[RMDB]
RNA sequence: GGGAACGACUCGAGUAGAGUCGAAAAUCAGCUAAGCUGUUGCUCUUACUUAGCUGCUAAGGAAUGAAGCUAAUUGGACCAUUCCAGCAUGUAAAAUAUGUAAAAUAUGUCCUUUCAUGGAACUCUGAAACAAACAAUGAGAACAACCAGAAAAAUAGCACGAUUUAAUGUUCGCAUUAAAUCGUGCAAAAGAAACAACAACAACAAC
Reactivity to 2A3 in 0.01 (KOAc 150mM, MgCl2 10mM, bicine 150mM(pH8.5), 24C), signal-to-noise 3, nucleotides 027 to 156: u070c000a000g010c000u020a050a000g000c040u030g200u300u140g080c050u060c020u150u060a040c010u030u010a030g000c010u040g000c090u080a070a080g000g010a060a030u060g030a070a050g040c090u100a210a040u160u140g060g000a050c020c020a000u000u040c020c000a000g030c010a020u040g010u140a000a050a050a040u140a010u050g020u070a000a100a040a070u130a190u170g010u000c010c000u090u070u090c040a080u040g020g010a020a030c000u020c000u040g100a130a090a050c010a090a080a000c020a080a130u120g010a030g000a020a010c030a010a030c010c020a010g110a050a130a030a020a040u180a030
Structure probing data (2A3) for a 207-nucleotide construct.